Conditions: 150 mM KOAc, 10 mM MgCl2 and 150 mM bicine (pH 8.5), 24 C. The record gives the reactivity of an RNA of 177 nucleotides to 2A3 and DMS. Values cover nucleotides 27 to 126.

RNA sequence: GGGAACGACUCGAGUAGAGUCGAAAAGAACGGUGUAAUCAUACGUAAGUCCGACGUGCCGGAUUGCAGUUUUUCUGCAGAUUCCUGAACAAUCAGGGGAUGGCACUGCCCAGAGAUCUGGGCUCAGCCUAUUACUCUUGUUCGCAAGAGUAAUAGGAAAAGAAACAACAACAACAAC
Reactivity to 2A3 in 0.01 (KOAc 150mM, MgCl2 10mM, bicine 150mM(pH8.5), 24C), signal-to-noise 6, nucleotides 027 to 126: g030a030a010c020g000g000u050g030u180a210a140u220c060a070u140a240c010g020u030a050a040g060u000c010c010g020a060c070g010u010g000c010c000g020g060a090u070u060g000c000a010g030u000u030u070u240u210c000u000g000c000a010g020a130u140u070c000c000u020g020a070a050c100a150a200u080c000a010g000g000g010g020a010u050g010g000c000a010c040u030g000c000c000c000a000g010a010g020a070u080c010u010g000g020g000c020u010c030a020g020
Reactivity to DMS in 0.01 (KOAc 150mM, MgCl2 10mM, bicine 150mM(pH8.5), 24C), signal-to-noise 7, nucleotides 027 to 126: g010a080a080c020g020g020u000g010u010a150a140u010c100a090u000a060c020g020u010a090a130g000u000c010c010g000a100c080g010u000g010c010c010g000g000a190u000u000g000c020a010g000u000u000u000u010u010c010u000g010c000a020g010a160u010u010c000c000u010g000a040a150c300a110a120u010c020a030g000g000g000g010a220u010g000g000c010a020c020u010g010c000c010c000a020g000a300g010a090u000c020u000g000g000g010c010u000c100a070g000